[RMDB]
RNA sequence: GGGAACGACUCGAGUAGAGUCGAAAAUGGUUUUUCACCGUUUAACAAAAUCGGAGCCCAUAAGAGGAUAACAGCUAAAGGGAAUGGAUAGUAUGCUUCAGUUCUUCUACUUCUUCUCUUUAAUUAAUAACCCUGUCGUAUUCGUACGACAGGGUUAAAAAGAAACAACAACAACAAC
Reactivity to 2A3 in 0.01 (KOAc 150mM, MgCl2 10mM, bicine 150mM(pH8.5), 24C), signal-to-noise 2, nucleotides 027 to 126: u070g000g000u070u050u000u000u160c020a020c000c030g000u040u000u000a300a130c160a070a160a030a060u140c070g000g010a010g030c000c000c000a030u060a080a040g100a000g160g010a030u070a130a000c000a010g060c080u030a020a020a010g050g020g000a040a050u100g020g000a030u010a060g030u180a100u080g070c020u030u100c030a050g000u080u060c000u010u000c000u020a070c000u060u030c040u080u030c000u000c000u000u220u050a150a130u100u140a030a180
Reactivity to DMS in 0.01 (KOAc 150mM, MgCl2 10mM, bicine 150mM(pH8.5), 24C), signal-to-noise 2, nucleotides 027 to 126: u000g020g020u000u000u020u000u020c170a100c010c020g000u050u000u000a130a200c130a130a000a070a060u020c080g000g000a210g000c040c010c000a090u010a070a030g020a040g010g020a070u010a040a060c210a020g020c130u000a000a040a030g000g000g020a030a040u000g010g010a020u000a010g000u020a030u000g000c050u020u020c160a120g000u010u030c060u010u020c040u000a070c100u000u020c040u000u000c040u000c020u010u000u000a000a080u060u000a050a100
The record gives the reactivity of an RNA of 177 nucleotides to 2A3 and DMS.
The DMS profile rests on 2,516 reads.